[RMDB]
This 177-nucleotide RNA was probed chemically with DMS and 2A3.
The RNA was probed in 150 mM KOAc, 10 mM MgCl2 and 150 mM bicine (pH 8.5) at 24 C.
As a SHAPE reagent, 2A3 marks flexible, mostly unpaired nucleotides at the ribose 2'-OH.
Source: RMDB library M2PK50, as collected in RNAgym.
For DMS the reverse transcriptase was MarathonRT.
The DMS profile rests on 1,898 reads.
Values are in units of 0.01, from 0 to 300, in steps of 10.
For 2A3 the reverse transcriptase was SuperScript II with manganese.
The 2A3 profile rests on 3,579 reads.

RNA sequence: GGGAACGACUCGAGUAGAGUCGAAAACCAUAACAGUUCGCUGUUAUGGACUGUCGGAAUGCCGAAUAAUUAAUCGUCCGCUUACGAUUAAUACCGACUAUAAAGCGUAACACUUCGGUGUUACGAAACUACGUCUCCAGUUCGCUGGAGACGUAGUAAAAGAAACAACAACAACAAC
Reactivity to DMS in 0.01 (KOAc 150mM, MgCl2 10mM, bicine 150mM(pH8.5), 24C), signal-to-noise 2, nucleotides 027 to 126: c020c000a000u000a000a000c000a010g000u000u020c280g020c010u010g010u000u000a000u000g000g010a120c080u000g020u010c010g000g020a230a090u000g010c070c070g000a090a080u010a070a030u000u010a020a000u010c000g000u000c260c250g000c230u010u020a020c000g010a010u000u000a000a020u000a200c020c010g000a020c040u010a120u000a050a050a090g000c000g000u000a000a000c000a010c010u000u010c160g020g000u010g010u000u000a000c000g000a010a030
Reactivity to 2A3 in 0.01 (KOAc 150mM, MgCl2 10mM, bicine 150mM(pH8.5), 24C), signal-to-noise 2, nucleotides 027 to 126: c000c000a000u000a000a000c000a010g040u080u080c100g070c090u010g010u010u000a000u010g000g030a070c050u090g000u000c020g010g030a130a130u150g110c060c030g070a050a050u180a130a030u030u020a010a010u000c010g040u030c050c090g090c230u100u100a010c010g010a000u000u010a010a000u020a050c010c000g010a010c030u030a050u060a200a130a010g110c000g000u000a000a000c000a010c000u010u090c220g090g000u000g000u000u000a000c010g000a040a010